[RMDB]
RNA sequence: GGGAACGACUCGAGUAGAGUCGAAAAUAGGUACAAUCGGUGACUUCGUUAAAUUAAUCAUCGAAACUGUAAACAAAUUCACUAACAAAUAAUCCCUUUGUUUUAUUGUCCUUUGAGUAUAAGCACUCAAGCUGAAGAAUUUCGAUUCUUCAGCUUGAAAAGAAACAACAACAACAAC
Reactivity to 2A3 in 0.01 (KOAc 150mM, MgCl2 10mM, bicine 150mM(pH8.5), 24C), signal-to-noise 3, nucleotides 027 to 126: u090a010g040g020u090a030c050a020a120u010c010g000g010u000g000a010c020u120u060c070g150u080u120a090a120a020u130u120a060a050u020c000a000u010c020g000a050a090a090c130u050g010u090a000a070a030c040a050a100a000u130u100c040a040c100u110a140a020c020a020a100a030u170a040a110u080c000c000c000u020u030u010g010u000u070u030u030a100u050u050g040u020c030c010u040u040u100g010a000g040u130a040u010a200a070g010c020a000c060u000
Reactivity to DMS in 0.01 (KOAc 150mM, MgCl2 10mM, bicine 150mM(pH8.5), 24C), signal-to-noise 2, nucleotides 027 to 126: u000a110g030g000u010a040c030a060a030u000c040g030g060u010g000a020c100u040u000c140g040u030u040a090a140a180u030u000a040a120u010c050a040u010c030g000a040a160a170c140u000g000u000a050a050a060c060a010a060a090u030u000c040a120c060u000a030a060c080a020a060a040u010a090a100u010c000c000c020u000u000u000g000u000u000u030u000a040u000u000g000u010c050c010u000u040u000g000a070g000u000a070u000a110a120g010c290a100c090u000
Conditions: 150 mM KOAc, 10 mM MgCl2 and 150 mM bicine (pH 8.5), 24 C.
The record gives the reactivity of an RNA of 177 nucleotides to 2A3 and DMS.
It was measured as part of the RMDB libraries RFM100 and RFMREP.
Values cover nucleotides 27 to 126.